RNA sequence: GGGAACGACUCGAGUAGAGUCGAAAACGGUCGAAAUUCGUUUCGACCGAAUAUGCUAGCUGAGCACAGCUGCAAUGCUAACCUGAAAGCCAGCUGCAAGCGCGAGUUCGGCGUUCGCGCCGAACAAGAUCGCUACUAGUUUCGACUAGUAGCGAUCAAAAGAAACAACAACAACAAC
Reactivity to DMS in 0.01 (KOAc 150mM, MgCl2 10mM, bicine 150mM(pH8.5), 24C), signal-to-noise 3, nucleotides 027 to 126: c010g000g000u020c030g000a020a000a030u000u000c220g000u000u000u000c000g010a010c020c000g010a010a030u000a060u020g000c010u000a010g010c000u000g010a180g010c050a120c300a030g000c020u000g020c180a070a070u010g000c030u000a100a110c130c020u000g010a080a100a120g010c010c010a010g010c010u010g020c030a100a080g000c150g000c090g010a140g010u000u000c000g000g000c000g040u010u000c200g010c030g000c020c010g020a010a020c010a090a130
Reactivity to 2A3 in 0.01 (KOAc 150mM, MgCl2 10mM, bicine 150mM(pH8.5), 24C), signal-to-noise 2, nucleotides 027 to 126: c020g000g010u020c000g020a000a000a030u150u110c190g080u030u000u000c000g020a000c000c000g000a010a010u090a020u030g010c040u050a020g000c020u030g040a030g080c010a030c040a120g020c000u060g000c070a050a030u160g000c000u030a080a090c020c020u020g040a070a020a010g000c000c000a010g000c020u030g000c030a040a030g030c100g030c030g110a110g060u000u000c010g030g000c010g060u010u050c180g020c010g000c020c000g010a010a010c010a000a020
An RNA of 177 nucleotides, treated with DMS and 2A3 and read out base by base. The RNA was probed in 150 mM KOAc, 10 mM MgCl2 and 150 mM bicine (pH 8.5) at 24 C. 2A3 adducts were read by reverse transcription with SuperScript II with manganese. Source: RMDB library M2PK50, as collected in RNAgym. Reactivities are given for positions 27 through 126.